RNA sequence: GGGAACGACUCGAGUAGAGUCGAAAACCGGAAUGGUGCCGCCGUGAUCGGGCCAUGCAAUAGUUGCCAACGACAACUAUGCUCCGGUUGCUCAGGCAGCGUAACGCUGCUUGAAAGACCACAUGAAUUAGCGCGACAUUGUUCGCAAUGUCGCGAAGAGCUUAAGAAACUUCGGUUUCUUAAGCUCAAAAGAAACAACAACAACAAC
Reactivity to DMS in 0.01 (KOAc 150mM, MgCl2 10mM, bicine 150mM(pH8.5), 24C), signal-to-noise 2, nucleotides 027 to 156: c020c010g040g000a050a050u000g020g020u000g020c020c030g030c040c100g010u010g010a090u010c030g010g010g000c030c020a090u000g020c120a140a060u000a030g020u000u000g000c010c000a180a240c240g020a060c000a000a030c000u010a010u000g020c010u000c030c020g060g010u000u000g000c160u010c040a020g010g020c000a010g050c010g040u000a140a110c180g050c020u000g000c010u000u000g000a050a080a140g010a300c000c020a050c090a100u000g000a120a180u000u010a120g040c010g040c020g000a050c020a040u000u010g030u000u000c300g010c010a010a020u000g000u000c000g000c000g000a000a080
Reactivity to 2A3 in 0.01 (KOAc 150mM, MgCl2 10mM, bicine 150mM(pH8.5), 24C), signal-to-noise 4, nucleotides 027 to 156: c000c000g010g030a040a020u060g040g030u140g300c000c020g020c020c120g240u150g050a200u100c000g000g000g000c000c010a020u030g000c010a070a260u010a040g000u000u000g030c060c130a170a080c230g070a110c020a000a000c030u000a010u010g030c000u000c010c000g010g020u010u040g000c000u010c010a000g010g000c000a000g000c020g050u120a090a040c300g000c000u020g000c000u010u010g010a030a000a000g040a020c010c020a040c020a170u250g180a260a070u180u090a140g050c010g000c000g000a000c000a010u020u000g000u020u070c070g000c080a000a000u000g000u000c000g000c000g000a020a000